[RMDB]
RNA sequence: GGGAACGACUCGAGUAGAGUCGAAAAAAUGUGCGACAUGGAUCUGCAAAGUGAAAGAGGAAGGGCUUUCAUUUAUCUUCAAGCCAUUCUUAGACAUGUUAGGAAAGUAUACAUGGAUUGCAAUUGCAUUACCGUCAUUCUUCGGAAUGACGGUAAUAAAAGAAACAACAACAACAAC
Reactivity to 2A3 in 0.01 (KOAc 150mM, MgCl2 10mM, bicine 150mM(pH8.5), 24C), signal-to-noise 3, nucleotides 027 to 126: a000a000u170g020u040g010c020g020a010c040a040u080g010g000a030u000c030u130g030c060a100a060a030g020u040g060a060a000a040g020a010g060g060a030a030g060g080g000c000u020u040u030c030a030u030u070u080a110u050c050u100u080c040a030a010g000c000c010a020u050u000c010u010u010a030g010a030c010a020u040g010u040u040a070g030g100a190a080a010g070u070a050u020a100c030a020u030g050g050a110u090u090g020c030a030a090u150u090g020c000
Reactivity to DMS in 0.01 (KOAc 150mM, MgCl2 10mM, bicine 150mM(pH8.5), 24C), signal-to-noise 4, nucleotides 027 to 126: a050a010u000g020u000g010c040g000a070c140a090u010g010g000a060u000c120u010g010c140a090a070a110g010u000g010a030a100a140g000a080g000g000a060a050g010g000g000c020u000u000u000c060a040u000u000u000a050u020c130u010u000c120a040a100g000c020c030a070u000u000c030u010u000a070g030a240c020a010u000g000u000u010a090g020g010a050a040a120g000u000a070u000a040c030a030u000g010g000a100u010u000g000c060a060a120u010u000g010c180